Conditions: 150 mM KOAc, 10 mM MgCl2 and 150 mM bicine (pH 8.5), 24 C. Chemical mapping of a 177-nucleotide RNA with DMS and 2A3. In probing experiments dimethyl sulfate is read out at A N1 and C N3, which are open when not base-paired. 2A3 adducts were read by reverse transcription with SuperScript II with manganese. Reactivities are given for positions 27 through 126.
[RMDB]
RNA sequence: GGGAACGACUCGAGUAGAGUCGAAAAAUGAGGACGAAUCUGGUGCCGGUAUCAAUGAUAUAGAAAGUCCUUUGAAAGUUUCUGAACCAAAUACAGCUGAUGCGCUUAGGAGCAGUGUACCAGAAGAACAUUUAUUUUACUUCGGUAAAAUAAAUGUAAAAGAAACAACAACAACAAC
Reactivity to DMS in 0.01 (KOAc 150mM, MgCl2 10mM, bicine 150mM(pH8.5), 24C), signal-to-noise 8, nucleotides 027 to 126: a080u020g010a030g000g000a020c020g010a110a150u010c020u000g000g020u000g000c010c020g000g010u010a040u000c040a060a080u020g000a080u010a060u010a090g010a080a100a210g000u010c010c010u000u000u010g010a100a090a130g000u000u000u000c010u010g000a110a160c090c050a060a080a070u020a080c110a070g000c070u010g000a050u010g000c040g020c100u020u020a070g010g010a060g020c070a070g030u020g020u010a020c020c010a020g000a040a100g010a100
Reactivity to 2A3 in 0.01 (KOAc 150mM, MgCl2 10mM, bicine 150mM(pH8.5), 24C), signal-to-noise 9, nucleotides 027 to 126: a010u130g010a010g020g010a010c020g040a040a150u020c020u040g020g000u020g030c020c040g050g030u060a030u060c030a090a120u110g090a040u040a010u040a180g120a050a080a010g010u020c000c000u020u010u050g120a100a080a010g010u020u020u020c040u040g070a070a060c030c010a070a080a040u170a060c040a020g040c050u060g020a050u070g030c040g010c080u080u130a090g030g090a040g030c030a020g010u020g010u130a020c010c000a010g020a030a010g050a040